Chemical mapping of a 177-nucleotide RNA with 2A3 and DMS. Reactivities are given for positions 27 through 126. Conditions: 150 mM KOAc, 10 mM MgCl2 and 150 mM bicine (pH 8.5), 24 C. 2A3 adducts were read by reverse transcription with SuperScript II with manganese. DMS adducts were read by reverse transcription with MarathonRT.
RNA sequence: GGGAACGACUCGAGUAGAGUCGAAAAGCCACCCCAGGUGAGCCCUCUCCUCCUUCGCAGUGAGAACUGGGGGCAGAGGAAGGGGGAACAAAGCGGGGACCACACUCAGGUCAGGAGGUCGGGUGCCUCUAUAGUGUUACUUCGGUAACACUAUAGAAAAAGAAACAACAACAACAAC
Reactivity to 2A3 in 0.01 (KOAc 150mM, MgCl2 10mM, bicine 150mM(pH8.5), 24C), signal-to-noise 4, nucleotides 027 to 126: g040c010c010a030c010c000c000c010a020g030g120u070g040a050g040c010c000c000u000c010u000c010c000u010c010c010u050u030c080g120c200a010g010u020g060a090g030a090a020c020u010g000g000g020g040g040c090a040g000a010g030g000a030a130g020g010g010g010g010a010a040c040a050a090a010g070c080g010g020g000g010a010c020c010a050c000a020c010u100c050a060g070g050u040c020a030g010g120a020g060g000u070c060g020g050g030u040g040c020c010
Reactivity to DMS in 0.01 (KOAc 150mM, MgCl2 10mM, bicine 150mM(pH8.5), 24C), signal-to-noise 8, nucleotides 027 to 126: g010c030c030a180c030c010c010c030a120g010g020u010g000a200g010c010c000c000u000c020u000c010c000u000c010c040u010u000c030g020c020a030g010u010g010a260g000a150a030c020u000g000g010g010g000g010c160a040g000a030g000g010a060a050g010g000g000g000g010a070a060c070a050a090a100g020c120g000g000g000g010a090c050c040a090c070a090c070u000c070a080g020g010u000c060a070g010g000a050g010g010u000c070g010g000g010u010g010c040c060